The data come from the RNA Mapping Database (RMDB), library OK3TST. Structure probing data (DMS and 2A3) for a 207-nucleotide construct. For 2A3 the reverse transcriptase was SuperScript II with manganese. The reactions ran in a buffer of 150 mM KOAc, 10 mM MgCl2 and 150 mM bicine (pH 8.5), at 24 C.
RNA sequence: GGGAACGACUCGAGUAGAGUCGAAAAGGUGUGACAAGGUUUGUUGUUUUUACCAAACCAAGUCUUGAUUUUUGUGACACCACCAAAGUGCUAGACACCUACUUUAAAAGUUUGCUAACUAACCUUGUAAAGGAUUAUGUUAGCACUCUUAAGGGUAAUGCAAUAAUGCAUUCGUGCAUUAUUGCAUAAAAGAAACAACAACAACAAC
Reactivity to DMS in 0.01 (KOAc 150mM, MgCl2 10mM, bicine 150mM(pH8.5), 24C), signal-to-noise 2, nucleotides 027 to 156: g010g000u010g010u020g010a050c020a070a300g010g030u000u010u010g030u010u010g010u010u010u020u020u020a100c160c080a020a040a050c040c030a050a260g000u000c020u010u000g020a140u000u000u000u000u000g010u000g000a110c050a050c020c010a110c090c060a080a130a050g040u000g030c050u010a170g020a290c040a040c060c010u000a050c020u000u000u000a040a020a020a000g010u000u000u000g030c000u000a010a010c020u000a020a030c020c000u000u000g020u000a130a130a070g070g020a040u000u010a000u010g000u000u000a010g020c000a020c010u000c000u000u000a010a070g010g010g010u000a090
Reactivity to 2A3 in 0.01 (KOAc 150mM, MgCl2 10mM, bicine 150mM(pH8.5), 24C), signal-to-noise 4, nucleotides 027 to 156: g010g010u040g000u040g070a020c060a030a050g060g030u030u020u020g030u020u030g030u020u060u040u100u080a070c030c030a030a010a010c000c020a020a020g020u000c000u000u030g020a040u010u080u100u150u120g070u060g100a060c050a020c020c010a000c000c020a050a020a000g060u050g080c040u060a040g030a050c020a020c050c040u080a050c040u080u160u140a100a220a000a000g010u010u030u040g000c000u000a000a000c000u010a010a010c000c000u060u130g260u300a220a150a050g000g030a130u130u020a060u260g000u000u000a000g000c000a000c000u000c000u030u030a020a070g060g000g000u040a030